[RMDB]
RNA sequence: GGGAACGACUCGAGUAGAGUCGAAAAUGAUGCAAUCAGGUAUUGCUCCAAGGAGUGCCAGAGGAAGCACUGUCUAAGUGGGCACAGGCACGAGUGCACUGCAAUAAGGUCUGAAACAAACUCAUAAUAACACUUGCCUAUUCGUAGGCAAGUGUUAAAAAGAAACAACAACAACAAC
Reactivity to 2A3 in 0.01 (KOAc 150mM, MgCl2 10mM, bicine 150mM(pH8.5), 24C), signal-to-noise 2, nucleotides 027 to 126: u080g030a030u120g030c020a030a050u000c030a070g040g080u130a050u090u140g020c040u030c050c010a070a050g040g010a040g030u010g020c060c040a150g030a080g190g070a070a020g010c010a020c050u060g060u060c040u050a080a070g060u140g070g030g000c020a000c020a070g020g050c030a000c060g040a060g000u040g000c060a040c190u030g010c040a000a060u040a150a030g040g020u000c000u000g070a100a090a020c020a040a020a000c020u040c060a080u090a300a040
Reactivity to DMS in 0.01 (KOAc 150mM, MgCl2 10mM, bicine 150mM(pH8.5), 24C), signal-to-noise 3, nucleotides 027 to 126: u000g000a070u010g020c070a070a130u000c020a080g020g000u000a070u000u000g010c010u000c040c080a120a140g010g000a070g020u000g000c030c030a130g010a130g000g020a170a110g020c010a020c030u000g010u020c060u020a090a100g000u000g000g000g050c050a070c100a040g000g030c080a040c080g000a120g010u010g010c040a070c070u010g020c070a040a050u000a060a060g030g000u000c020u000g000a090a070a070c150a070a060a150c100u000c060a070u010a040a130
Notes:
Chemical mapping of a 177-nucleotide RNA with 2A3 and DMS. The reactions ran in a buffer of 150 mM KOAc, 10 mM MgCl2 and 150 mM bicine (pH 8.5), at 24 C. Values are in units of 0.01, from 0 to 300, in steps of 10.